[RMDB]
RNA sequence: GGGAACGACUCGAGUAGAGUCGAAAAACAAACAAGAUCAAAAUGUGACUUGCUCAAGGUCAACUCCUAAUUUCUGGUUUAUUCCUUAGGCAGAAAGCAAUGUGCAAGUCACGUUAUUAAAACAGAAAUGAUGACGAUAGUUCGCUAUCGUCAUCAUAAAAGAAACAACAACAACAAC
Reactivity to DMS in 0.01 (KOAc 150mM, MgCl2 10mM, bicine 150mM(pH8.5), 24C), signal-to-noise 3, nucleotides 027 to 126: a060c040a120a080a080c220a100a120g000a090u020c170a030a100a030a020u010g030u000g010a060c000u000u030g010c000u000c000a020a040g020g000u000c050a040a240c110u010c000c000u010a080a060u000u020u000c150u000g010g000u000u000u010a080u020u000c050c020u000u010a010g000g000c090a000g000a030a080a130g010c070a040a090u000g010u000g000c020a000a000g000u000c000a010c000g010u000u000a030u000u000a010a050a080a070c210a030g010a080a100
Reactivity to 2A3 in 0.01 (KOAc 150mM, MgCl2 10mM, bicine 150mM(pH8.5), 24C), signal-to-noise 3, nucleotides 027 to 126: a000c040a020a040a000c030a080a070g060a220u210c080a020a150a110a060u050g000u020g000a010c000u010u000g010c010u010c030a050a000g040g020u030c020a010a040c020u000c030c000u050a050a100u070u180u160c120u090g090g140u130u070u110a130u250u150c010c010u000u000a000g020g000c020a010g050a070a040a010g070c030a040a160u090g010u010g000c000a000a000g000u020c000a000c000g000u000u000a020u020u060a010a030a010a020c040a000g140a040a190

An RNA of 177 nucleotides, treated with DMS and 2A3 and read out base by base. The RNA was probed in 150 mM KOAc, 10 mM MgCl2 and 150 mM bicine (pH 8.5) at 24 C. The data come from the RNA Mapping Database (RMDB), library OK2TST. DMS adducts were read by reverse transcription with MarathonRT.